Structure probing data (2A3 and DMS) for a 177-nucleotide construct.
RNA sequence: GGGAACGACUCGAGUAGAGUCGAAAAGCCAGGAACCGACCACAACGACAACCAUCCAACGAGCCGUGCCCAAAAAUGCCGUUUGUCCCGGCUGUGGAAAGAUCUUUUUGGGACGCCGUCUGCAGCGCAGCCUUUUACUCUUCGGAGUAAAAGGCUGAAAAGAAACAACAACAACAAC
Reactivity to 2A3 in 0.01 (KOAc 150mM, MgCl2 10mM, bicine 150mM(pH8.5), 24C), signal-to-noise 5, nucleotides 027 to 126: g040c010c010a020g040g060a030a050c020c000g080a050c000c030a020c030a130a030c060g070a010c030a040a070c060c010a050u090c010c010a030a020c040g010a020g020c020c010g020u140g090c000c000c000a040a040a000a000a000u120g010c000c010g030u020u050u140g050u060c020c030c020g050g000c060u040g050u090g060g070a060a090a080g060a080u090c040u040u090u040u070u060g010g010g030a010c020g020c020c010g050u020c010u060g030c030a050g000c020g000
Reactivity to DMS in 0.01 (KOAc 150mM, MgCl2 10mM, bicine 150mM(pH8.5), 24C), signal-to-noise 3, nucleotides 027 to 126: g010c000c010a070g030g000a070a060c020c030g010a060c000c010a050c090a080a100c080g000a050c070a100a080c060c050a040u050c020c060a110a060c070g020a030g020c020c020g030u030g010c040c010c010a000a010a040a060a050u010g000c010c020g000u010u010u000g000u000c040c100c000g020g000c040u000g010u000g000g030a010a090a060g010a080u000c020u000u010u010u020u020g000g000g000a090c100g030c070c050g020u010c020u000g000c010a050g000c060g010
For DMS the reverse transcriptase was MarathonRT. 2A3 adducts were read by reverse transcription with SuperScript II with manganese. The DMS profile rests on 5,381 reads. The reactions ran in a buffer of 150 mM KOAc, 10 mM MgCl2 and 150 mM bicine (pH 8.5), at 24 C. It was measured as part of the RMDB library OK1LIB. The 2A3 profile rests on 3,643 reads.